[RMDB]
RNA sequence: GGGAACGACUCGAGUAGAGUCGAAAAGCGCACGUGAUCCGAUAGCGCGGCCGGAUCUGGCCACGAUCGCGCGAUCGGCGCGGAUCUCUAGUACUCAUGCGCGUACAUGGCCGAUCCGCAGCGGAUCGUUCAGUCGCAUGUUCGCAUGCGACUGAACAAAAGAAACAACAACAACAAC
Reactivity to DMS in 0.01 (KOAc 150mM, MgCl2 10mM, bicine 150mM(pH8.5), 24C), signal-to-noise 2, nucleotides 027 to 126: g020c030g000c050a120c130g020u000g000a020u000c020c010g010a170u010a070g010c010g010c000g030g030c120c010g000g000a040u000c040u010g040g000c020c040a070c210g000a110u000c020g000c040g000c010g000a030u000c150g000g010c030g040c020g010g000a040u010c030u000c080u010a150g020u000a040c020u000c050a120u010g020c070g020c070g020u000a050c100a140u000g000g020c070c090g000a000u010c000c010g030c080a080g010c020g020g000a010u000c020
Reactivity to 2A3 in 0.01 (KOAc 150mM, MgCl2 10mM, bicine 150mM(pH8.5), 24C), signal-to-noise 2, nucleotides 027 to 126: g000c000g000c010a020c130g100u070g010a040u010c020c020g060a090u120a130g050c050g000c000g020g000c030c000g010g010a060u030c130u220g010g000c000c020a020c040g010a050u050c010g000c000g000c020g080a240u150c140g160g010c010g010c000g050g030a040u010c060u020c040u100a040g090u030a050c020u070c150a120u210g050c090g000c010g040u010a020c010a050u070g000g000c000c010g010a010u000c010c000g000c000a020g010c020g030g010a010u020c050

Structure probing data (DMS and 2A3) for a 177-nucleotide construct. The reactions ran in a buffer of 150 mM KOAc, 10 mM MgCl2 and 150 mM bicine (pH 8.5), at 24 C. 2A3 adducts were read by reverse transcription with SuperScript II with manganese. Source: RMDB library OK2TRN, as collected in RNAgym. For 2A3, 2,684 sequencing reads were counted.